[RMDB]
RNA sequence: GGGAACGACUCGAGUAGAGUCGAAAAGGCAAGGCGUGGAAGAAAGAACUGAUGGACCUGUGCGUCCCCAGGAGAUUCAUGCAUUCGUCAAUCACCACGCACAACGGGCCUUUCUUGGCCGCGUUGACGAAGACGUUAGAGGGGUGGUCCACUUGCAGGAGACUAACUAUUUCGAUAGUUAGUCUCCAAAAGAAACAACAACAACAAC
Reactivity to DMS in 0.01 (KOAc 150mM, MgCl2 10mM, bicine 150mM(pH8.5), 24C), signal-to-noise 3, nucleotides 027 to 156: g030g000c020a080a080g010g020c080g010u000g020g000a090a140g020a100a110a150g010a100a110c030u010g000a060u000g010g010a020c020c020u000g020u000g020c080g010u000c010c010c000c030a100g020g030a120g010a090u000u010c050a090u000g020c050a120u000u000c040g020u000c030a080a050u000c040a140c020c010a080c020g000c020a130c020a020a030c040g020g000g000c010c010u000u010u000c150u020u010g020g010c010c000g000c070g030u010u010g010a090c030g000a050a110g030a120c050g020u010u010a130g030a130g020g000g010g020u000g020g010u000c030c050a080c080u000u010g010c050a260
Reactivity to 2A3 in 0.01 (KOAc 150mM, MgCl2 10mM, bicine 150mM(pH8.5), 24C), signal-to-noise 4, nucleotides 027 to 156: g060g010c040a030a020g060g000c020g030u040g030g050a080a070g050a040a190a020g080a050a040c050u110g000a100u070g080g000a000c020c030u180g040u130g090c090g020u060c010c010c020c010a030g080g040a100g040a030u120u070c040a040u160g040c020a050u030u080c020g050u020c020a010a040u050c020a020c040c000a010c030g050c010a030c010a000a000c000g000g020g000c010c000u150u100u040c120u170u140g000g000c030c010g120c000g060u010u020g010a020c020g030a020a050g010a010c080g030u090u130a010g020a050g050g010g000g000u040g020g000u010c000c020a030c010u010u070g030c070a040
Conditions: 150 mM KOAc, 10 mM MgCl2 and 150 mM bicine (pH 8.5), 24 C.
Structure probing data (DMS and 2A3) for a 207-nucleotide construct.
2A3 is a SHAPE reagent: it acylates the 2'-hydroxyl of flexible nucleotides of all four kinds.
For DMS, 6,439 sequencing reads were counted.
Source: RMDB library OK3TST, as collected in RNAgym.
For 2A3, 2,415 sequencing reads were counted.